[RMDB]
RNA sequence: GGGAACGACUCGAGUAGAGUCGAAAAGCUACAUGAAUCAGUAGUAUGCAGCCUAGAUACAGAUAGCAUAGAACUACGUAUAUAGUAUGGUAAGUAAUGGGUAGUAGUACUAAGAUAUAAUGGUUCGGUGUUGAGUCGUGUUCGCGCGAUUCGGUGCAAAAGAAACAACAACAACAAC
Reactivity to DMS in 0.01 (KOAc 150mM, MgCl2 10mM, bicine 150mM(pH8.5), 24C), signal-to-noise 9, nucleotides 027 to 126: g000c040u010a040c040a050u020g010a060a030u010c060a070g010u000a020g010u000a030u010g010c130a300g010c020c010u000a030g010a130u020a030c060a080g010a160u020a050g000c030a040u010a100g010a140a080c030u000a030c160g010u020a050u020a090u010a040g010u000a030u010g000g010u010a050a090g010u010a040a080u010g000g000g010u000a060g010u010a130g020u000a020c020u000a040a090g010a080u020a050u020a070a100u010g000g010u000u000c020g010
Reactivity to 2A3 in 0.01 (KOAc 150mM, MgCl2 10mM, bicine 150mM(pH8.5), 24C), signal-to-noise 9, nucleotides 027 to 126: g020c010u030a010c010a070u090g060a050a040u070c020a000g020u010a000g000u000a020u060g020c020a000g000c010c000u030a020g010a030u060a030c020a010g080a050u070a020g010c010a020u020a040g060a030a020c010u030a010c060g100u020a040u010a010u000a060g060u010a020u050g090g050u080a060a080g020u030a080a100u100g040g010g010u040a050g010u020a010g020u000a040c010u010a010a070g050a030u050a000u010a040a090u080g010g000u010u010c010g010